[RMDB]
RNA sequence: GGGAACGACUCGAGUAGAGUCGAAAACUGCUCACCGACGUGAACAUCCACCGGAUUAUUCGCCGCGCCACGGCGUAUGGCCCCGCCUAUGACCCCAAGGCCGACAGCCUGGCGGAAGACAAGGUCGGCCAACGUAGGAAUUCGUUCCUACGUUGGCAAAAGAAACAACAACAACAAC
Reactivity to DMS in 0.01 (KOAc 150mM, MgCl2 10mM, bicine 150mM(pH8.5), 24C), signal-to-noise 5, nucleotides 027 to 126: c090u000g010c070u000c030a070c030c020g040a080c110g000u000g000a070a060c090a070u000c030c040a090c040c050g010g000a070u000u010a090u000u000c040g010c030c030g020c070g010c070c110a070c100g000g000c020g030u000a040u000g010g000c020c020c040c070g010c040c040u000a070u000g000a200c030c010c010c050a110a140g010g000c000c020g010a110c120a130g020c010c030u000g020g020c040g010g020a060a050g000a100c120a080a100g000g000u000c050g020
Reactivity to 2A3 in 0.01 (KOAc 150mM, MgCl2 10mM, bicine 150mM(pH8.5), 24C), signal-to-noise 3, nucleotides 027 to 126: c020u050g020c030u000c020a050c000c030g090a080c030g070u040g040a060a030c020a070u020c020c000a050c050c060g000g040a040u090u060a070u080u140c020g010c020c010g020c000g010c000c010a040c030g000g040c010g000u030a070u070g050g000c030c010c000c000g090c020c020u180a190u260g090a170c000c000c000c000a020a010g020g000c000c010g040a030c030a010g010c000c000u010g000g000c020g010g020a020a010g010a000c030a060a000g060g030u040c030g010